RNA sequence: GGGAACGACUCGAGUAGAGUCGAAAAAGGCUUAAUUUACUGGGUAAGCUAGCCUAACGAAGCAGAGCCCAAUAGCUCAUCCGAGAACUCUUUAUGUAAAUGUGCGCAGAUAGAUGACUGGAAAGUGCAUCACUCUACAGUUCGCUGUAGAGUGAUGAAAAGAAACAACAACAACAAC
Reactivity to DMS in 0.01 (KOAc 150mM, MgCl2 10mM, bicine 150mM(pH8.5), 24C), signal-to-noise 3, nucleotides 027 to 126: a080g020g000c020u020u010a040a050u010u010u010a120c120u010g000g020g020u010a050a050g010c040u000a070g020c030c010u000a100a110c080g000a190a080g000c080a090g020a140g000c000c010c020a100a150u010a090g020c010u000c050a090u010c000c030g000a100g000a110a090c120u010c050u000u000u000a050u020g020u000a030a090a100u000g030u000g010c070g030c040a020g020a120u010a030g010a090u000g000a110c040u010g010g020a120a040a110g020u000g030
Reactivity to 2A3 in 0.01 (KOAc 150mM, MgCl2 10mM, bicine 150mM(pH8.5), 24C), signal-to-noise 2, nucleotides 027 to 126: a000g050g000c030u020u070a040a050u160u080u060a110c080u090g110g040g030u040a020a030g040c010u000a010g000c010c050u020a070a030c080g080a060a000g020c060a020g010a050g070c000c030c000a050a040u060a010g000c010u030c040a060u000c020c020g050a020g000a080a030c020u020c010u050u140u050a040u080g070u080a010a110a120u120g050u080g020c030g010c040a020g000a040u020a010g080a030u070g010a030c020u030g020g020a080a040a040g100u080g050

The record gives the reactivity of an RNA of 177 nucleotides to DMS and 2A3. Conditions: 150 mM KOAc, 10 mM MgCl2 and 150 mM bicine (pH 8.5), 24 C. As a SHAPE reagent, 2A3 marks flexible, mostly unpaired nucleotides at the ribose 2'-OH. For DMS the reverse transcriptase was MarathonRT. Source: RMDB library RFMREP, as collected in RNAgym. 2A3 adducts were read by reverse transcription with SuperScript II with manganese.